[RMDB]
Structure probing data (2A3 and DMS) for a 177-nucleotide construct. The DMS profile rests on 2,924 reads. For 2A3, 8,191 sequencing reads were counted.
RNA sequence: GGGAACGACUCGAGUAGAGUCGAAAAGAUAUGGAUGUGUACAGCUUUUGACGGUGGUCGGAAACGACACACCGAUAAGCUGACACAUCCUAAGUCAAAGCAGUUCAUACUUCGGUAUGAACUGCAAGCUGUUGCUUAAGUUCGCUUAAGCAACAGCAAAAGAAACAACAACAACAAC
Reactivity to 2A3 in 0.01 (KOAc 150mM, MgCl2 10mM, bicine 150mM(pH8.5), 24C), signal-to-noise 4, nucleotides 027 to 126: g020a010u040a030u120g000g000a020u010g010u000g000u080a300c000a000g000c020u090u110u210u260g270a100c010g040g000u010g000g000u020c010g000g010a050a070a030c010g010a020c100a020c000a010c300c000g010a010u020a050a030g000c000u010g000a000c000a010c000a010u000c000c000u000a000a010g010u000c050a120a050a030g000c000a000g020u000u000c000a010u000a010c010u060u140c300g180g000u000a000u000g000a010a000c010u000g000c010a010a000
Reactivity to DMS in 0.01 (KOAc 150mM, MgCl2 10mM, bicine 150mM(pH8.5), 24C), signal-to-noise 3, nucleotides 027 to 126: g000a040u000a300u000g010g010a000u000g020u010g000u010a190c000a010g010c010u000u000u000u000g000a190c040g010g010u010g000g010u000c000g000g000a070a030a130c000g020a020c000a090c010a020c010c000g020a030u000a010a000g000c000u000g000a080c000a010c000a000u000c000c010u000a000a080g010u000c020a100a150a140g020c000a000g000u000u000c000a010u000a020c000u000u000c230g030g010u000a020u000g000a000a000c000u000g000c010a010a020